[RMDB]
RNA sequence: GGGAACGACUCGAGUAGAGUCGAAAAACGAGCGAUACGUCGCUCGAAGGUAUGUAUUUCAACCCCACGAUAAGCCCCGGAAACUUAUUGUGUUUUGAAAUAGAACAGUCACGUUACGACGUGACAACGCUCGGUAAGAGUUCGCUCUUACCGAGCGAAAAGAAACAACAACAACAAC
Reactivity to 2A3 in 0.01 (KOAc 150mM, MgCl2 10mM, bicine 150mM(pH8.5), 24C), signal-to-noise 4, nucleotides 027 to 126: a000c000g000a000g000c000g000a000u010a040c230g060u050c000g000c000u000c000g000a010a000g120g020u130a040u190g090u020a030u030u040u000c030a060a060c020c000c030c010a020c030g000a000u000a020a010g010c010c030c030c100g110g070a160a110a050c020u030u010a020u010u010g000u010g030u030u030u100u020g020a010a010a010u100a050g070a050a040c070a050g010u000c010a000c000g000u010u050a090c300g040a000c000g020u000g020a010c000a020a020
Reactivity to DMS in 0.01 (KOAc 150mM, MgCl2 10mM, bicine 150mM(pH8.5), 24C), signal-to-noise 1, nucleotides 027 to 126: a060c000g000a010g020c000g000a060u000a020c120g070u000c000g020c000u000c000g000a090a020g000g030u000a080u020g000u010a020u000u020u000c000a070a000c170c140c090c140a000c000g000a000u000a060a020g060c000c020c000c050g080g020a220a120a220c000u000u000a020u020u000g000u000g090u010u030u040u060g000a000a000a000u000a000g010a150a130c180a010g000u000c000a000c000g000u000u010a060c110g030a000c010g040u020g000a030c010a000a160
Structure probing data (2A3 and DMS) for a 177-nucleotide construct. The reactions ran in a buffer of 150 mM KOAc, 10 mM MgCl2 and 150 mM bicine (pH 8.5), at 24 C.